[RMDB]
RNA sequence: GGGAACGACUCGAGUAGAGUCGAAAAGGGGAUGGCACGGCCUUCAUCUAAUAGUGACAGUAGCAUUUUAGAGCUAGAGGGUCUUUAUCCAUUGUCUAGUUCACAUGCAUGAUUUUAAAAAAGGAAGAUAGAUAGAUAACUUCGGUUAUCUAUCUAUAAAAGAAACAACAACAACAAC
Reactivity to 2A3 in 0.01 (KOAc 150mM, MgCl2 10mM, bicine 150mM(pH8.5), 24C), signal-to-noise 4, nucleotides 027 to 126: g030g000g000g000a010u040g010g000c020a000c090g050g030c010c000u030u050c010a050u020c020u080a090a070u090a130g090u040g070a030c020a090g150u170a030g030c010a000u030u060u040u200a030g010a000g010c010u020a030g030a020g000g000g030u020c000u110u180u100a070u020c020c000a020u070u140g140u060c000u010a010g000u010u050c020a020c000a050u070g040c020a010u080g080a100u140u190u190u270a070a160a030a040a020a000g100g010a040a040g050
Reactivity to DMS in 0.01 (KOAc 150mM, MgCl2 10mM, bicine 150mM(pH8.5), 24C), signal-to-noise 6, nucleotides 027 to 126: g020g010g000g010a070u000g010g010c140a110c200g020g010c030c010u000u000c050a090u000c050u000a050a060u000a070g020u010g000a090c090a100g010u000a080g020c010a030u010u010u010u000a110g000a020g010c060u000a050g000a050g010g000g020u000c140u000u000u010a080u020c050c040a080u000u010g010u000c010u000a030g010u000u000c020a090c210a050u000g010c050a070u000g010a080u000u010u010u010a000a030a060a080a070a080g010g010a090a100g000